[RMDB]
RNA sequence: GGGAACGACUCGAGUAGAGUCGAAAAGGGGUGGUGAAGUAAUGGUCGGUGUCGAUCGAGACCUGAGUCUUGUCGCUGCUGGCGAGCCCGUCGUAGAUCUGCUGGGCAUCCGACGGGAAGAUUCCGGUCAUAGACCGUGUUUCGACACGGUCUAUGAAAAAGAAACAACAACAACAAC
Reactivity to DMS in 0.01 (KOAc 150mM, MgCl2 10mM, bicine 150mM(pH8.5), 24C), signal-to-noise 6, nucleotides 027 to 126: g000g000g010g020u010g010g020u010g010a090a090g010u010a080a080u000g010g010u000c030g020g020u000g010u000c050g010a050u010c090g010a120g010a040c010c080u010g010a090g000u000c020u000u000g010u010c030g010c030u000g010c170u000g000g000c030g000a100g010c000c010c010g010u000c010g010u000a130g010a060u000c100u000g000c090u000g000g010g020c190a090u010c030c010g000a030c010g010g010g000a030a040g000a090u000u000c010c060g010g000
Reactivity to 2A3 in 0.01 (KOAc 150mM, MgCl2 10mM, bicine 150mM(pH8.5), 24C), signal-to-noise 4, nucleotides 027 to 126: g030g000g020g020u070g000g010u070g040a050a030g030u170a080a090u150g050g000u030c040g000g050u060g030u080c030g020a080u050c060g000a020g010a060c030c050u070g040a040g050u000c020u060u050g030u020c020g010c060u150g010c040u060g050g000c020g030a030g050c030c010c000g010u020c010g010u040a060g010a090u040c020u090g060c050u130g050g040g010c020a020u050c020c000g010a010c010g000g010g010a010a010g010a020u080u010c020c010g050g000